[RMDB]
RNA sequence: GGGAACGACUCGAGUAGAGUCGAAAAUGUCCCAGUUUCGACUGGGACAAAAGGAUGAGGAGGAUCAAAGAUCAAAGCCGUCGCUCAUGCGUAAAGACGGCAAAAGGCUAGUGUUCGCACUAGCCAAUGGCAUUAAAUACUUCGGUAUUUAAUGCCAAAAAGAAACAACAACAACAAC
Reactivity to DMS in 0.01 (KOAc 150mM, MgCl2 10mM, bicine 150mM(pH8.5), 24C), signal-to-noise 3, nucleotides 027 to 126: u010g010u000c000c000c000a010g000u000u000u010c170g040a030c000u000g030g000g010a010c000a000a030a100a070g010g010a080u000g000a040g000g000a090g000g000a040u000c030a160a090a100g000a090u020c100a110a120a170g000c010c000g000u000c000g000c070u010c140a080u010g010c110g020u010a080a060a230g010a010c010g010g010c030a010a030a060a100g000g020c000u000a000g010u000g010u010u010c150g000c010a020c000u000a000g000c000c010a020a010
Reactivity to 2A3 in 0.01 (KOAc 150mM, MgCl2 10mM, bicine 150mM(pH8.5), 24C), signal-to-noise 1, nucleotides 027 to 126: u050g020u010c000c000c000a000g010u060u050u100c220g070a020c000u020g040g000g000a000c000a000a020a000a010g050g040a060u140g020a050g060g010a030g030g020a030u070c120a120a130a060g060a040u060c030a030a060a000g060c020c010g000u000c000g030c050u100c040a100u240g010c010g010u030a040a040a080g000a000c010g000g000c000a030a000a000a000g000g000c000u000a000g000u000g020u040u120c210g010c040a010c030u000a000g000c000c000a000a010
The record gives the reactivity of an RNA of 177 nucleotides to DMS and 2A3. The reactions ran in a buffer of 150 mM KOAc, 10 mM MgCl2 and 150 mM bicine (pH 8.5), at 24 C. It was measured as part of the RMDB library M2PK50. For DMS, 2,788 sequencing reads were counted.